[RMDB]
RNA sequence: GGGAACGACUCGAGUAGAGUCGAAAACUCCAGGCACUCCUUCGUCACGAAUUCGCUGAGUGUUUCCUGAUCCAAGUGCCAGAGAAUGUUUUCACCUCUGAGACUUUCAUCUAGUCUAACCAUCCGAAGUCAUUACGCUAUUCGUAGCGUAAUGACUAAAAGAAACAACAACAACAAC
Reactivity to 2A3 in 0.01 (KOAc 150mM, MgCl2 10mM, bicine 150mM(pH8.5), 24C), signal-to-noise 3, nucleotides 027 to 126: c010u000c000c020a030g010g030c010a010c020u050c020c040u100u100c060g060u050c020a020c130g100a100a120u140u080c060g020c110u120g050a000g060u060g030u020u050u040c020c010u030g010a040u060c030c020a080a010g030u020g150c030c010a030g010a010g000a030a090u190g030u040u050u040u120c070a080c040c030u000c060u070g100a090g010a090c010u000u030u010c060a050u020c010u040a010g020u000c010u020a040a020c020c010a040u090c030c020g060a020
Reactivity to DMS in 0.01 (KOAc 150mM, MgCl2 10mM, bicine 150mM(pH8.5), 24C), signal-to-noise 3, nucleotides 027 to 126: c060u010c020c070a140g010g000c030a060c040u000c070c120u010u010c100g000u010c090a090c140g020a050a080u000u010c050g020c100u000g010a130g030u000g010u000u010u000c010c030u000g000a100u000c090c090a070a050g010u000g010c030c040a080g000a090g010a080a040u000g030u000u020u000u010c020a080c100c050u010c090u000g000a150g000a030c020u000u000u000c120a050u010c070u000a060g010u000c030u000a070a140c040c050a110u010c080c060g000a150